Chemical mapping of a 177-nucleotide RNA with DMS and 2A3. As a SHAPE reagent, 2A3 marks flexible, mostly unpaired nucleotides at the ribose 2'-OH. The 2A3 profile rests on 10,432 reads. 2A3 adducts were read by reverse transcription with SuperScript II with manganese. DMS adducts were read by reverse transcription with MarathonRT.

[RMDB]
RNA sequence: GGGAACGACUCGAGUAGAGUCGAAAAAUGUGGUCGGCGAGGCGCUGGGCACGCGCCUUCUGCGUCUGGGCUUGCUCCACGAGGCGGACCAUCGCGGCGAACUGGGUAUCGGCCCCUACCGCGGUGGCCUCUAUCAUCGAUUCGUCGAUGAUAGAGGAAAAGAAACAACAACAACAAC
Reactivity to DMS in 0.01 (KOAc 150mM, MgCl2 10mM, bicine 150mM(pH8.5), 24C), signal-to-noise 4, nucleotides 027 to 126: a060u010g000u000g000g020u000c060g000g020c010g000a050g000g000c010g030c020u010g010g000g030c020a150c300g030c250g000c020c020u000u040c050u020g030c010g020u020c020u000g030g010g010c020u000u020g030c100u000c000c020a020c030g000a100g000g000c080g010g000a270c000c000a000u000c000g010c000g000g000c240g020a080a100c200u030g010g010g000u010a150u030c170g000g000c060c010c000c120u010a190c010c010g000c010g030g020u000g000g000
Reactivity to 2A3 in 0.01 (KOAc 150mM, MgCl2 10mM, bicine 150mM(pH8.5), 24C), signal-to-noise 7, nucleotides 027 to 126: a000u190g010u040g000g030u020c010g010g010c010g020a000g010g010c040g010c030u050g010g040g030c050a070c210g160c070g010c020c000u100u090c060u060g010c000g020u010c010u030g070g140g000c020u060u220g020c040u060c020c000a020c030g020a050g030g060c100g030g020a040c000c000a010u000c000g000c010g010g000c080g050a120a120c180u300g020g000g030u240a300u270c100g190g030c010c000c000c000u010a020c000c000g000c000g000g000u000g000g010